RNA sequence: GGGAACGACUCGAGUAGAGUCGAAAAGAUGCUCAUGGCAAAACCAACGUGUACCAAUACCCAUUGCCCUAUCAGAUCGGCUGGCUUACCUUCACAAAUCAGAGCAAUAUUGACAUCACGUUUGAUGGAUCGUCGCCGUAUUCGUACGGCGACGAUCAAAAGAAACAACAACAACAAC
Reactivity to 2A3 in 0.01 (KOAc 150mM, MgCl2 10mM, bicine 150mM(pH8.5), 24C), signal-to-noise 1, nucleotides 027 to 126: g120a030u030g000c000u000c010a040u120g000g000c020a000a220a000a000c000c010a000a060c000g080u060g000u160a000c000c040a040a000u050a140c000c060c090a030u100u140g000c010c010c010u060a060u110c010a010g040a110u120c010g000g000c000u000g000g000c000u080u090a070c000c000u000u010c080a050c040a030a180a110u080c070a060g000a000g020c140a000a000u120a010u000u160g010a000c000a000u000c000a040c070g080u030u020u180g050a130u080g000